[RMDB]
RNA sequence: GGGAACGACUCGAGUAGAGUCGAAAAAUGAUCACCAUUACGCCAUCCUGUGCCAGCGUUCUGGAAUGUCUUACUGAACUGGCGUUUGAGCUGGGAAUGAAUGACGCACCACGCCGUAAAGGGCCGCUAACUACACAAAUUUCGAUUUGUGUAGUUAAAAAGAAACAACAACAACAAC
Reactivity to DMS in 0.01 (KOAc 150mM, MgCl2 10mM, bicine 150mM(pH8.5), 24C), signal-to-noise 9, nucleotides 027 to 126: a070u010g010a110u010c090a130c040c020a080u010u000a080c090g010c030c030a070u000c040c030u000g010u000g010c030c030a070g010c090g010u000u000c060u000g010g010a090a090u010g010u000c040u000u000a140c040u000g000a300a160c040u000g000g010c020g010u000u010u000g010a130g010c030u000g010g000g000a050a060u000g000a060a040u010g010a040c040g000c120a130c040c040a080c090g010c050c030g010u010a040a090a130g000g000g010c030c110g010c160
Reactivity to 2A3 in 0.01 (KOAc 150mM, MgCl2 10mM, bicine 150mM(pH8.5), 24C), signal-to-noise 9, nucleotides 027 to 126: a000u180g020a070u080c030a020c090c010a010u030u120a040c060g010c010c000a050u040c020c020u060g030u090g060c020c010a020g010c030g040u060u040c020u040g030g060a070a070u120g020u010c030u050u130a200c020u060g010a050a010c010u010g020g000c050g030u110u100u180g120a070g000c010u020g000g020g020a020a020u040g020a030a050u100g010a010c010g010c020a030c010c010a030c040g010c010c000g020u040a080a080a070g040g010g000c010c010g030c040